Source: RMDB library TTRDES, as collected in RNAgym.
An RNA of 177 nucleotides, treated with DMS and 2A3 and read out base by base.
The RNA was probed in 150 mM KOAc, 10 mM MgCl2 and 150 mM bicine (pH 8.5) at 24 C.
High 2A3 reactivity points to a flexible backbone, as in loops and unpaired stretches.
For 2A3, 20,317 sequencing reads were counted.

RNA sequence: GGGAACGACUCGAGUAGAGUCGAAAAGAUAUGGAGAGACUGUGGGAGCUUCCACCUCGGAAACGAGGUGGUGAGCGAGGAUCACACAUGUCUCUCCUAAGUCAAAAGCGAACGUUCGCGUUCGCAACACUUCUCUAUACUUCGGUAUAGAGAAGUGAAAAGAAACAACAACAACAAC
Reactivity to DMS in 0.01 (KOAc 150mM, MgCl2 10mM, bicine 150mM(pH8.5), 24C), signal-to-noise 4, nucleotides 027 to 126: g010a010u000a130u020g000g010a020g010a020g010a020c010u000g020u000g010g000g000a160g000c000u000u000c000c000a000c000c000u000c010g010g010a030a030a060c000g010a020g000g030u000g000g010u010g000a010g020c000g020a140g020g000a240u000c090a080c000a010c040a020u020g000u000c000u000c000u000c000c000u000a010a050g000u000c020a100a080a140a130g020c000g010a010a010c010g020u000u020c260g020c010g010u000u000c010g020c000a030a150
Reactivity to 2A3 in 0.01 (KOAc 150mM, MgCl2 10mM, bicine 150mM(pH8.5), 24C), signal-to-noise 5, nucleotides 027 to 126: g010a000u030a010u060g000g000a000g000a000g010a010c010u020g010u010g000g040g130a290g020c010u010u000c000c000a000c010c000u010c000g000g000a030a020a010c000g000a000g050g010u010g000g010u100g010a000g000c020g030a090g030g120a090u160c030a010c000a010c000a070u300g010u000c000u000c000u000c000c000u000a000a000g000u000c020a010a040a110a060g010c000g000a010a020c010g020u110u170c300g010c000g210u000u010c000g000c010a020a000